[RMDB]
RNA sequence: GGGAACGACUCGAGUAGAGUCGAAAAGAUAUGGAACCGUGAGAGGCAUCGAUCUAGUGGAUCGGAAACGAUCCCUAGGGAGCCUCCACGGUUCCUAAGUCAAAGCCAUGUGCUUCGGCACAUGGCACUCAGGACUGAAGUUCGCUUCAGUCCUGAGAAAAGAAACAACAACAACAAC
Reactivity to DMS in 0.01 (KOAc 150mM, MgCl2 10mM, bicine 150mM(pH8.5), 24C), signal-to-noise 2, nucleotides 027 to 126: g010a020u000a150u000g000g000a000a000c000c000g030u000g020a210g000a010g020g000c010a300u000c250g000a020u030c000u000a010g000u020g030g000a000u000c000g010g010a030a020a060c000g010a010u000c000c000c000u000a000g000g000g000a010g030c000c000u000c010c020a020c010g010g010u000u000c000c010u000a000a050g000u000c020a130a120a220g010c000c000a030u000g010u000g000c000u000u000c210g020g030c000a010c000a000u000g010g020c000a010
Reactivity to 2A3 in 0.01 (KOAc 150mM, MgCl2 10mM, bicine 150mM(pH8.5), 24C), signal-to-noise 1, nucleotides 027 to 126: g000a000u010a010u070g010g000a000a000c010c010g000u010g030a300g000a000g040g000c030a100u300c220g010a010u000c000u000a000g010u150g240g010a010u010c000g010g000a030a000a000c010g010a020u000c030c000c010u000a000g040g010g000a010g030c000c000u000c000c000a010c010g000g000u000u000c000c010u000a000a000g000u000c010a000a060a130g000c020c000a000u000g000u000g010c000u080u130c300g150g000c000a000c000a010u000g000g000c000a010
Chemical mapping of a 177-nucleotide RNA with DMS and 2A3. For 2A3 the reverse transcriptase was SuperScript II with manganese. The reactions ran in a buffer of 150 mM KOAc, 10 mM MgCl2 and 150 mM bicine (pH 8.5), at 24 C. Source: RMDB library TTRDES, as collected in RNAgym.